[RMDB]
RNA sequence: GGGAACGACUCGAGUAGAGUCGAAAAGUACUUUCAUCUCCAUCUUAAUUCUUCUUGACCCAGGCAUUUCAAGAGGGUCUCCCGUCGAUGGAGUCCAAGGAAUUCAGACAACCAACCCUCCAAAUACCAUUUUCCCAUAUCCUGGCGUUUAUGUAAGAAUUACGCUCCUAUUCGUAGGAGCGUAAUUAAAAGAAACAACAACAACAAC
Reactivity to DMS in 0.01 (KOAc 150mM, MgCl2 10mM, bicine 150mM(pH8.5), 24C), signal-to-noise 1, nucleotides 027 to 156: g020u000a080c040u000u020u000c030a030u010c000u010c020c030a080u000c010u000u000a060a130u000u000c000u000u000c010u000u020g000a030c060c030c020a070g010g020c120a110u010u010u010c040a060a070g000a060g040g030g020u020c060u010c030c030c050g010u080c100g000a120u000g000g020a080g020u000c070c080a060a130g040g010a110a000u020u000c080a140g000a160c030a100a100c040c040a090a180c030c010c000u000c060c010a010a050a070u010a050c040c030a140u000u000u000u000c000c000c000a140u000a080u000c040c040u020g010g020c050g000u000u000u000a040u010g000u000a070a130g040
Reactivity to 2A3 in 0.01 (KOAc 150mM, MgCl2 10mM, bicine 150mM(pH8.5), 24C), signal-to-noise 1, nucleotides 027 to 156: g040u050a050c010u120u070u120c040a100u110c000u000c010c020a050u040c010u180u230a190a090u130u040c030u060u010c010u060u060g050a040c010c010c010a030g070g000c060a050u050u200u130c080a140a010g000a030g040g000g000u050c010u020c000c010c020g100u110c110g000a080u100g000g020a000g000u000c000c020a030a020g060g030a080a040u170u120c080a100g030a180c060a060a010c110c000a030a050c020c010c000u000c000c020a080a120a000u100a060c010c010a070u080u000u090u060c010c010c000a030u070a030u070c000c030u000g160g010c040g060u030u120u110a040u300g040u230a030a020g020